[RMDB]
RNA sequence: GGGAACGACUCGAGUAGAGUCGAAAAAAAUAUACCAGAAACUAAUGUUCUUUCUGCUAAUAAGAAUACAAUUCGGUAUAUGUAUGAAUCUAUUAGUAGUCAUGGGGAUAAUGUAAGAGAAUGGCUAAAUUACCAUGGUAUUCGUACCAUGGUAAUUAAAAGAAACAACAACAACAAC
Reactivity to 2A3 in 0.01 (KOAc 150mM, MgCl2 10mM, bicine 150mM(pH8.5), 24C), signal-to-noise 2, nucleotides 027 to 126: a000a000a000u060a000u000a000c000c010a070g090a060a040a010c060u070a120a030u120g000u000u000c000u020u060u040c050u070g040c030u030a070a080u040a140a040g020a010a000u050a050c060a030a100u080u080c010g060g020u060a100u000a010u110g040u030a080u060g040a080a050u000c020u030a090u090u110a080g050u000a000g010u020c010a040u080g000g010g040g050a020u070a160a060u240g090u160a080a040g020a020g070a130a000u030g010g020c000u060a040
Reactivity to DMS in 0.01 (KOAc 150mM, MgCl2 10mM, bicine 150mM(pH8.5), 24C), signal-to-noise 6, nucleotides 027 to 126: a080a100a060u030a030u020a060c020c000a220g020a080a060a070c120u020a110a140u000g000u000u000c010u000u000u010c090u010g010c110u010a070a060u010a020a030g000a070a020u000a020c080a050a080u000u010c060g010g020u000a020u000a030u010g000u010a040u000g010a100a100u000c040u000a040u010u000a070g010u000a020g010u000c050a020u000g020g010g000g000a110u000a050a060u020g010u010a060a060g000a100g000a090a060u000g000g020c070u000a040
Chemical mapping of a 177-nucleotide RNA with 2A3 and DMS. Source: RMDB library OK2TST, as collected in RNAgym. DMS adducts were read by reverse transcription with MarathonRT. For 2A3 the reverse transcriptase was SuperScript II with manganese. The 2A3 profile rests on 1,755 reads.